[RMDB]
RNA sequence: GGGAACGACUCGAGUAGAGUCGAAAACGUUGCGAGAACAUGGUGCUAUACAUCAUCUGGUACGCUUACUUAUGAGAGCUUUCCAGGAUACCCAGCGUCGGUCAUCUGUUGCAAGUGGUGGCAGUCAUAUCCAAUACUGAUUCGUCAGUAUUGGAUAAAAAGAAACAACAACAACAAC
Reactivity to DMS in 0.01 (KOAc 150mM, MgCl2 10mM, bicine 150mM(pH8.5), 24C), signal-to-noise 9, nucleotides 027 to 126: c100g010u000u000g010c060g010a090g010a090a100c140a060u000g010g020u000g010c060u010a110u000a180c060a040u000c060a060u010c040u010g000g000u000a040c190g000c020u010u000a090c110u010u010a110u010g010a240g000a040g000c020u000u010u000c020c020a040g000g010a090u000a080c060c020c030a090g010c070g010u000c050g010g010u000c040a040u000c040u000g010u000u000g010c080a050a060g020u000g010g020u000g010g010c040a060g000u000c100a150
Reactivity to 2A3 in 0.01 (KOAc 150mM, MgCl2 10mM, bicine 150mM(pH8.5), 24C), signal-to-noise 7, nucleotides 027 to 126: c020g040u040u070g020c040g020a080g030a090a030c030a070u060g010g000u040g030c060u140a040u030a250c020a030u050c010a020u020c010u020g020g000u030a020c060g010c000u050u050a080c020u170u210a130u290g170a150g000a010g120c000u050u050u000c010c000a010g040g010a040u070a100c020c010c020a020g020c030g060u040c010g000g030u000c020a040u000c030u080g090u120u110g060c040a060a070g060u030g110g020u010g040g000c010a000g050u050c020a040
Chemical mapping of a 177-nucleotide RNA with DMS and 2A3.
The 2A3 profile rests on 11,720 reads.
For DMS the reverse transcriptase was MarathonRT.
The DMS profile rests on 28,798 reads.